An RNA of 177 nucleotides, treated with DMS and 2A3 and read out base by base. The reactions ran in a buffer of 150 mM KOAc, 10 mM MgCl2 and 150 mM bicine (pH 8.5), at 24 C. The 2A3 profile rests on 1,661 reads. Values are in units of 0.01, from 0 to 300, in steps of 10.
RNA sequence: GGGAACGACUCGAGUAGAGUCGAAAAUGUUGGGUUCUAGAUGUUAUGAUGACGAGUCGGUCGGCUCCGCGCUAGGUUUGGUCGCCUAGGGGAUGGAGAUAUGGAAAGGGUCUCGUGUGCUGUCAGUGAUAGUCAUUACGUUCGCGUAAUGACUAUCAAAAGAAACAACAACAACAAC
Reactivity to DMS in 0.01 (KOAc 150mM, MgCl2 10mM, bicine 150mM(pH8.5), 24C), signal-to-noise 2, nucleotides 027 to 126: u010g030u020u010g000g020g040u000u000c020u010a110g030a140u000g000u010u000a110u010g010a100u000g000a060c040g000a100g020u000c060g000g000u020c060g010g000c020u000c030c050g020c080g000c000u000a020g000g020u010u000u010g020g010u000c260g010c020c010u000a020g000g000g000g020a090u010g000g000a070g030a080u020a110u010g000g020a090a060a090g000g000g010u000c040u010c090g020u010g000u000g020c070u010g020u000c080a130g000u020
Reactivity to 2A3 in 0.01 (KOAc 150mM, MgCl2 10mM, bicine 150mM(pH8.5), 24C), signal-to-noise 2, nucleotides 027 to 126: u110g000u030u060g050g020g060u000u040c010u050a060g020a100u070g040u230u080a100u130g150a050u060g050a000c060g010a020g000u010c040g000g040u030c010g040g000c010u000c000c010g040c000g080c040u000a000g000g050u050u020u070g110g000u060c020g000c000c000u010a000g000g050g060g000a010u080g000g020a040g010a030u110a090u080g080g060a020a100a070g110g010g000u020c010u000c040g050u070g020u040g030c020u060g080u040c010a040g050u010